RNA sequence: GGGAACGACUCGAGUAGAGUCGAAAAGUGCCGAUUGAAAUUCAUGGGAGCCUCUCCAUAAUGGAUGAACGCCGCGCUAGUACGCGCAGUCGCGACGUAAACGCUCUGUAUUCCCGUUCAGGCCUCAAAUAAAUCAUAUCUUCGGAUAUGAUUUAUUAAAAGAAACAACAACAACAAC
Reactivity to 2A3 in 0.01 (KOAc 150mM, MgCl2 10mM, bicine 150mM(pH8.5), 24C), signal-to-noise 3, nucleotides 027 to 126: g060u030g020c040c000g070a100u070u210g070a140a180a110u140u080c060a060u110g020g050g010a030g040c030c040u090c010u030c030c010a040u210a290a080u200g020g020a030u100g040a060a020c020g010c030c000g020c000g010c020u030a050g070u110a060c090g040c020g000c090a010g130u190c050g000c010g020a040c010g030u030a010a110a020c020g000c020u010c000u030g030u040a090u020u030c010c000c010g000u050u070c030a020g000g050c000c020u050c040a040
Reactivity to DMS in 0.01 (KOAc 150mM, MgCl2 10mM, bicine 150mM(pH8.5), 24C), signal-to-noise 9, nucleotides 027 to 126: g010u000g020c030c020g010a160u000u010g000a090a120a080u000u000c080a050u010g010g010g000a070g010c090c060u000c040u000c010c010a120u000a090a080u000g010g010a040u000g010a090a040c040g020c020c020g010c020g010c020u000a090g010u010a050c190g010c130g020c080a040g010u010c040g020c010g010a020c030g000u000a040a070a100c150g000c010u000c010u000g010u000a150u000u000c010c010c010g010u000u010c120a100g010g010c030c100u010c120a060

Chemical mapping of a 177-nucleotide RNA with 2A3 and DMS. The RNA was probed in 150 mM KOAc, 10 mM MgCl2 and 150 mM bicine (pH 8.5) at 24 C. Values are in units of 0.01, from 0 to 300, in steps of 10.